[RMDB]
RNA sequence: GGGAACGACUCGAGUAGAGUCGAAAAUAAAAACCUAGGCAAAUGGCCUGAAUAUCAUGAAGUAUCCACCCAUAUCUCAAAUCUAUCAUCCUAGUCAUCCAUUCUUUCUGGCAAGUUUUAGAAAAAGCCUGCACGAUCCGUUCGCGGAUUGUGCAGGAAAAGAAACAACAACAACAAC
Reactivity to 2A3 in 0.01 (KOAc 150mM, MgCl2 10mM, bicine 150mM(pH8.5), 24C), signal-to-noise 4, nucleotides 027 to 126: u120a000a080a030a030a000c000c040u010a020g020g000c020a100a130a250u170g100g010c000c000u020g070a060a050u200a150u260c090a090u140g070a090a010g040u020a030u020c010c000a030c000c020c010a040u040a120u140c050u000c050a030a260a140u040c040u040a070u100c030a020u020c020c020u010a000g020u050c010a030u040c030c000a020u080u000c020u020u040u010c000u010g010g000c000a050a080g050u000u040u070u180a120g110a010a120a000a000a010g070
Reactivity to DMS in 0.01 (KOAc 150mM, MgCl2 10mM, bicine 150mM(pH8.5), 24C), signal-to-noise 2, nucleotides 027 to 126: u010a090a070a120a110a130c030c020u000a020g000g000c050a160a080a060u020g040g020c020c010u000g000a090a080u010a080u010c050a050u020g000a100a050g000u000a070u010c010c010a040c030c010c030a100u030a090u000c040u000c050a100a100a080u050c030u010a070u030c070a030u000c020c000u010a000g010u030c030a060u040c030c010a100u000u020c070u000u000u000c020u000g000g000c020a080a110g010u000u000u020u020a110g010a040a110a090a090a100g020
Structure probing data (2A3 and DMS) for a 177-nucleotide construct. The reactions ran in a buffer of 150 mM KOAc, 10 mM MgCl2 and 150 mM bicine (pH 8.5), at 24 C. For DMS, 2,116 sequencing reads were counted. For 2A3 the reverse transcriptase was SuperScript II with manganese.